Record summary:
The data come from the RNA Mapping Database (RMDB), library TTRDEL. Chemical mapping of a 177-nucleotide RNA with 2A3 and DMS. For 2A3 the reverse transcriptase was SuperScript II with manganese. The reactions ran in a buffer of 150 mM KOAc, 10 mM MgCl2 and 150 mM bicine (pH 8.5), at 24 C. DMS adducts were read by reverse transcription with MarathonRT. For 2A3, 10,357 sequencing reads were counted.
RNA sequence: GGGAACGACUCGAGUAGAGUCGAAAAGAUAUGGAGCUACUACCCACCUCCAGCUUCAAUCGGAAACGAUUGGGAGAGCUGAAGAGGUAGCUCCUAAGUCAAAGCCAUCUUCUUCGGAAGAUGGCAACGCUAAUGUAUACUUCGGUAUACAUUAGCGAAAAGAAACAACAACAACAAC
Reactivity to 2A3 in 0.01 (KOAc 150mM, MgCl2 10mM, bicine 150mM(pH8.5), 24C), signal-to-noise 4, nucleotides 027 to 126: g110a030u200a200u300g000g000a000g000c000u030a030c010u140a160c000c040c020a050c020c000u000c010c000a010g000c030u270u270c000a000a020u000c010g030g030a050a070a090c010g010a020u010u000g020g090g070a300g040a000g040c010u010g010a070a000g020a030g020g000u010a000g000c000u000c010c000u030a090a020g090u080c140a180a030a030g000c010c000a000u010c010u020u000c000u030u090c290g140g010a000a000g000a000u000g010g000c010a000a000
Reactivity to DMS in 0.01 (KOAc 150mM, MgCl2 10mM, bicine 150mM(pH8.5), 24C), signal-to-noise 5, nucleotides 027 to 126: g010a130u000a150u000g000g010a000g010c000u000a000c000u000a110c010c010c020a300c120c000u000c000c000a000g010c000u010u000c000a010a000u000c000g000g000a080a090a210c000g010a010u000u010g000g010g010a260g010a030g000c010u010g010a020a010g000a100g000g010u000a000g000c010u010c010c000u000a010a050g000u010c170a060a130a110g000c010c000a000u000c000u000u010c000u000u010c210g020g000a010a010g000a010u000g000g020c000a000a010